This 177-nucleotide RNA was probed chemically with DMS and 2A3. Conditions: 150 mM KOAc, 10 mM MgCl2 and 150 mM bicine (pH 8.5), 24 C. 2A3 is a SHAPE reagent: it acylates the 2'-hydroxyl of flexible nucleotides of all four kinds. 2A3 adducts were read by reverse transcription with SuperScript II with manganese. Source: RMDB libraries RFM100 and RFMREP, as collected in RNAgym. Values cover nucleotides 27 to 126.
RNA sequence: GGGAACGACUCGAGUAGAGUCGAAAAUCCGCCUCUCUACCAAACACUCGUAAGUACUAUUUAUUGCGAGUGCAUGGAAGAGGCGAAUAGAGAACGGAACGUUGUCCACCCCUUCAAUCAUCAUCAAUGUCGGAAGAGUAUUCGUACUCUUCCGACAAAAAGAAACAACAACAACAAC
Reactivity to DMS in 0.01 (KOAc 150mM, MgCl2 10mM, bicine 150mM(pH8.5), 24C), signal-to-noise 2, nucleotides 027 to 126: u000c030c000g010c000c000u000c000u020c090u080a200c010c000a050a280a140c010a020c000u000c000g040u000a000a000g000u020a130c300u050a190u020u030u000a130u020u000g000c000g000a040g010u000g000c230a250u010g000g000a140a000g000a000g010g020c010g000a060a000u010a060g000a080g010a060a080c050g030g000a040a070c090g000u000u010g030u030c040c030a280c000c040c000c060u000u030c080a030a040u050c030a070u000c070a030u060c060a100a130
Reactivity to 2A3 in 0.01 (KOAc 150mM, MgCl2 10mM, bicine 150mM(pH8.5), 24C), signal-to-noise 2, nucleotides 027 to 126: u000c000c010g010c010c000u000c000u080c040u080a300c020c000a010a010a010c000a000c000u000c010g050u050a000a000g060u260a150c180u100a150u260u300u070a200u120u000g020c020g000a000g000u000g010c000a000u070g000g040a040a000g000a000g000g000c040g000a000a010u180a000g160a000g020a060a020c040g010g000a040a050c080g010u050u070g000u060c020c000a020c020c000c020c010u050u080c020a080a150u110c050a020u000c000a000u040c020a080a100